[RMDB]
RNA sequence: GGGAACGACUCGAGUAGAGUCGAAAAAUACACUGCAGGUGCGUGCGAGCAGUUUUCGAAAUAAUCGUACGUACGUAAAGACCCAACUCUACUCGAUGCGAGGGUCAGCAAAGUCGUUCCCAUAUAACAGGAAUACCUUGUUCGCAAGGUAUUCCUGAAAAGAAACAACAACAACAAC
Reactivity to 2A3 in 0.01 (KOAc 150mM, MgCl2 10mM, bicine 150mM(pH8.5), 24C), signal-to-noise 2, nucleotides 027 to 126: a000u120a040c040a040c080u120g090c030a050g060g070u020g020c000g020u020g000c030g000a010g010c120a080g020u040u020u080u270c180g140a090a030a020u130a040a040u060c000g000u030a020c000g020u020a010c010g020u020a060a030a020g000a000c010c000c000a000a010c010u030c000u000a000c010u000c000g030a020u100g000c000g020a140g000g000g000u010c040a000g000c030a050a300a010g000u010c010g010u000u000c000c000c000a000u000a000u000a010a010
Reactivity to DMS in 0.01 (KOAc 150mM, MgCl2 10mM, bicine 150mM(pH8.5), 24C), signal-to-noise 1, nucleotides 027 to 126: a040u000a160c090a060c100u000g030c150a040g000g000u000g000c000g090u000g000c020g000a050g020c300a040g000u000u000u000u000c210g000a030a080a080u000a080a210u000c020g000u000a010c000g020u020a040c050g000u000a060a110a150g000a060c000c010c010a080a030c010u000c000u000a010c010u000c000g030a100u000g000c010g000a050g030g000g000u000c000a160g010c020a110a180a170g000u000c000g000u000u000c000c000c000a050u020a020u030a040a150
Chemical mapping of a 177-nucleotide RNA with 2A3 and DMS. 2A3 adducts were read by reverse transcription with SuperScript II with manganese. The reactions ran in a buffer of 150 mM KOAc, 10 mM MgCl2 and 150 mM bicine (pH 8.5), at 24 C. It was measured as part of the RMDB library M2PK90. DMS (dimethyl sulfate) methylates the pairing face of unpaired adenines and cytosines.